An RNA of 207 nucleotides, treated with DMS and 2A3 and read out base by base. For 2A3 the reverse transcriptase was SuperScript II with manganese. The data come from the RNA Mapping Database (RMDB), library OK3TST. The DMS profile rests on 1,518 reads.

RNA sequence: GGGAACGACUCGAGUAGAGUCGAAAAGACCAAUCCAUGGACAUACUCAGGAACUUUAAAAAACUGCUCCAAUUUAUUUUAUCAGGACAACAUCUAUCUUUUGUACAAGUAACGUCUACCGCUCCUUAACAAUUCCAUAAGCUUAGGCACCAUAAGAAUAUACGAGUGGUUUCGACCACUCGUAUAUAAAAGAAACAACAACAACAAC
Reactivity to DMS in 0.01 (KOAc 150mM, MgCl2 10mM, bicine 150mM(pH8.5), 24C), signal-to-noise 1, nucleotides 027 to 156: g040a240c020c050a130a110u000c010c020a070u020g020g020a100c020a300u000a140c050u010c100a090g000g000a080a120c060u010u010u000a040a110a100a070a060a120c090u010g010c020u010c030c000a050a200u030u000u000a090u030u000u000u010a040u000c040a050g010g020a160c060a040a100c040a180u000c100u000a050u000c020u000u000u000u030g000u010a070c090a010a140g000u000a040a040c030g010u000c070u000a080c000c030g000c020u000c020c020u000u000a050a090c000a050a120u000u010c030c020a050u010a040a040g000c050u000u000a060g000g020c010a040c060c030a100u000a090a190g010a170
Reactivity to 2A3 in 0.01 (KOAc 150mM, MgCl2 10mM, bicine 150mM(pH8.5), 24C), signal-to-noise 3, nucleotides 027 to 156: g070a020c020c000a010a050u030c010c000a060u090g020g020a020c000a060u080a060c070u070c110a050g000g040a030a070c040u120u200u280a080a130a000a030a080a130c070u070g000c020u020c010c010a030a060u100u150u050a120u010u250u160u040a080u120c070a030g000g040a010c010a050a010c000a060u020c030u110a060u070c010u090u090u100u130g050u040a060c010a060a000g010u030a150a010c020g020u020c020u020a040c010c020g030c030u040c000c000u010u040a080a040c040a060a090u110u060c030c020a030u040a130a010g000c010u040u030a020g030g030c050a020c010c060a040u110a110a030g180a090